Description: Structure probing data (2A3 and DMS) for a 177-nucleotide construct. Reactivities are given for positions 27 through 126.

[RMDB]
RNA sequence: GGGAACGACUCGAGUAGAGUCGAAAAUAAUGCCACUUCGGUGGCAUUAGCAGGUACGAAACCCCUAUCAAGUACAAAAUCCCAAACAACAAGAUAGGCAAAUAAUGCAUAGCUUCGGCUAUGCAAAUUAAUGGAAGGAAUUCGUUCCUUCCAUUAAAAAAGAAACAACAACAACAAC
Reactivity to 2A3 in 0.01 (KOAc 150mM, MgCl2 10mM, bicine 150mM(pH8.5), 24C), signal-to-noise 3, nucleotides 027 to 126: u020a000a010u000g000c000c000a010c010u030u050c210g100g000u000g030g020c000a000u000u000a000g020c010a020g000g210u020a000c010g020a160a090a080c030c060c010c010u000a010u040c010a050a040g000u010a020c010a010a120a010a080u030c010c000c000a040a090a050c060a030a020c010a060a000g010a020u020a000g030g000c020a030a080a080u180a110a080u130g000c010a000u000a010g000c000u050u030c270g040g000c000u010a000u010g000c000a000a000a010
Reactivity to DMS in 0.01 (KOAc 150mM, MgCl2 10mM, bicine 150mM(pH8.5), 24C), signal-to-noise 7, nucleotides 027 to 126: u000a000a000u000g000c000c000a000c000u010u020c170g050g030u000g000g010c000a000u000u000a010g010c220a080g020g000u000a040c030g010a070a140a140c110c150c010c000u000a040u000c020a050a150g000u000a020c040a040a070a090a110u010c010c000c000a070a070a080c130a060a040c090a110a130g010a020u000a000g000g010c300a060a060a060u010a080a110u000g000c000a010u000a010g000c010u000u020c230g020g010c000u000a000u000g000c000a000a010a030
The RNA was probed in 150 mM KOAc, 10 mM MgCl2 and 150 mM bicine (pH 8.5) at 24 C. For DMS the reverse transcriptase was MarathonRT.